The record gives the reactivity of an RNA of 177 nucleotides to DMS and 2A3. Values cover nucleotides 27 to 126. Conditions: 150 mM KOAc, 10 mM MgCl2 and 150 mM bicine (pH 8.5), 24 C.

[RMDB]
RNA sequence: GGGAACGACUCGAGUAGAGUCGAAAACUGGCCCUUCGGGGCCAGGCGGCCGAUGAUGAUGGUGGGCACUCGCCGAUUGGUGAGGUAAGGGGCGAGGAGACAGAGGGUAGCGAAGAUUCGUCUUCGCGUAACAUGUAGUUUUCGAACUACAUGUUACAAAAGAAACAACAACAACAAC
Reactivity to DMS in 0.01 (KOAc 150mM, MgCl2 10mM, bicine 150mM(pH8.5), 24C), signal-to-noise 8, nucleotides 027 to 126: c010u000g010g010c000c000c000u000u010c220g040g010g010g010c010c000a000g010g010c110g010g020c030c030g010a100u010g010a120u010g000a090u010g010g020u010g000g000g000c080a160c020u000c020g020c000c010g010a200u010u010g010g020u000g010a050g000g010u010a070a090g010g000g000g010c080g000a080g010g010a120g010a070c100a070g010a110g000g000g010u000a120g010c000g000a020a010g000a050u000u000c190g010u000c000u000u000c000g020c030
Reactivity to 2A3 in 0.01 (KOAc 150mM, MgCl2 10mM, bicine 150mM(pH8.5), 24C), signal-to-noise 6, nucleotides 027 to 126: c010u000g000g000c000c000c000u010u040c240g030g000g000g000c000c000a000g000g000c020g050g010c020c040g080a120u110g020a030u030g010a020u090g050g060u040g050g020g000c030a050c040u020c010g000c030c010g120a200u090u300g030g010u040g020a040g010g030u070a050a090g030g000g010g010c050g020a060g020g020a030g020a020c040a020g060a040g020g050g030u070a040g010c010g010a010a000g000a030u060u090c120g050u000c040u000u000c000g000c020